[RMDB]
RNA sequence: GGGAACGACUCGAGUAGAGUCGAAAACGUGAUGAAACAAGUUUACGUACUGGUGUGCGUGUCGUUAUUGAUGUGCGUAAGGAUGCAAAUGCUAGUGUCAUUUUAAAUAACUUAUACAAACAAACACGACAGAUGACCCGUUCGCGGGUCAUCUGUCAAAAGAAACAACAACAACAAC
Reactivity to 2A3 in 0.01 (KOAc 150mM, MgCl2 10mM, bicine 150mM(pH8.5), 24C), signal-to-noise 1, nucleotides 027 to 126: c000g140u140g050a080u000g100a020a000a000c090a090a000g000u150u220u190a080c090g110u110a000c000u050g070g080u030g010u020g160c020g000u150g000u000c090g000u010u030a000u090u120g080a130u060g000u020g030c000g000u000a030a030g000g000a000u110g000c000a060a060a060u050g050c000u000a000g050u000g060u060c220a240u000u060u090u300a060a060a000u160a000a000c060u240u030a090u020a180c210a050a080a030c190a050a220a050c050a000c030